[RMDB]
RNA sequence: GGGAACGACUCGAGUAGAGUCGAAAAUACCGCGUCUUCGGACGCGGUAAGAUCCCGUCGGAAAACCUGAGAGAGGGAGAUGAAGAGACUCAAGCUACGCAAUGACUGCCGGAUUCGUCCGGCAGAAACGCAUAUCGUAUUUCGAUACGAUAUGCGUAAAAGAAACAACAACAACAAC
Reactivity to 2A3 in 0.01 (KOAc 150mM, MgCl2 10mM, bicine 150mM(pH8.5), 24C), signal-to-noise 2, nucleotides 027 to 126: u010a000c010c000g020c000g010u000c010u030u080c260g130g000a010c000g000c040g030g020u000a020a000g000a000u000c020c010c000g030u050c010g110g060a040a070a080a160c000c010u090g020a060g000a010g000a010g060g030g000a040g010a030u090g020a030a080g030a010g020a070c010u000c110a060a020g030c010u130a050c100g010c060a060a150u170g100a140c010u020g000c020c030g020g010a020u000u040c150g060u020c040c010g000g000c010a000g010a000a010
Reactivity to DMS in 0.01 (KOAc 150mM, MgCl2 10mM, bicine 150mM(pH8.5), 24C), signal-to-noise 3, nucleotides 027 to 126: u000a000c010c020g030c000g020u000c010u000u010c180g020g010a000c000g030c000g000g010u010a010a010g000a140u000c000c000c010g010u000c070g000g010a090a030a060a040c080c090u000g010a080g010a090g000a080g000g000g010a040g010a060u010g000a120a060g000a090g000a040c050u000c060a070a090g020c100u000a060c100g040c120a050a080u000g000a150c000u000g020c000c000g030g010a020u000u010c130g000u000c000c000g000g010c000a000g010a010a060
Overview: Structure probing data (2A3 and DMS) for a 177-nucleotide construct.